[RMDB]
RNA sequence: GGGAACGACUCGAGUAGAGUCGAAAACUCGAGGAGCAUAGAGGCGUGCGAACUCGACAUGAAUCAGCCUCAAUUAGAAGGUACUCGUGAGAGCGAAGUACCGAGAAUUGGUCGACGAUCACCGGCGAUCUUCCGACCUUGAAUUAAGCCGGAAAAACAUUAAUAAUGGUUUCGACCAUUAUUAAUGAAAAGAAACAACAACAACAAC
Reactivity to 2A3 in 0.01 (KOAc 150mM, MgCl2 10mM, bicine 150mM(pH8.5), 24C), signal-to-noise 6, nucleotides 027 to 156: c010u010c000g000a020g010g020a070g020c010a010u050a060g010a010g000g000c000g000u010g000c020g050a090a060c010u000c020g040a050c090a150u300g100a110a120u150c050a050g000c000c000u000c010a010a080u130u090a060g060a160a040g000g000u000a000c000u000c000g000u030g050a080g000a010g040c020g020a130a010g000u010a010c010c010g000a020g020a010a140u150u110g000g010u000c000g000a010c030g000a010u010c010a010c090c000g000g000c000g000a000u000c000u030u020c110c040g010a000c010c000u010u100g050a040a030u110u100a060a010g000c000c010g000g000a070a010a000a000a000
Reactivity to DMS in 0.01 (KOAc 150mM, MgCl2 10mM, bicine 150mM(pH8.5), 24C), signal-to-noise 3, nucleotides 027 to 156: c020u010c000g010a050g010g000a290g020c030a090u000a120g020a060g020g040c050g080u000g000c020g000a070a220c010u000c030g000a090c090a110u010g000a130a120u020c050a140g010c000c000u000c000a080a160u000u000a100g000a160a300g010g030u000a000c000u000c010g020u010g020a300g010a300g010c020g020a090a080g030u000a000c000c000g000a090g010a070a150u010u000g010g010u000c000g010a070c080g000a100u000c050a120c040c040g020g020c040g000a040u000c040u000u000c020c020g000a090c000c020u000u000g020a100a090u010u000a070a110g010c000c000g020g010a010a050a060a130a150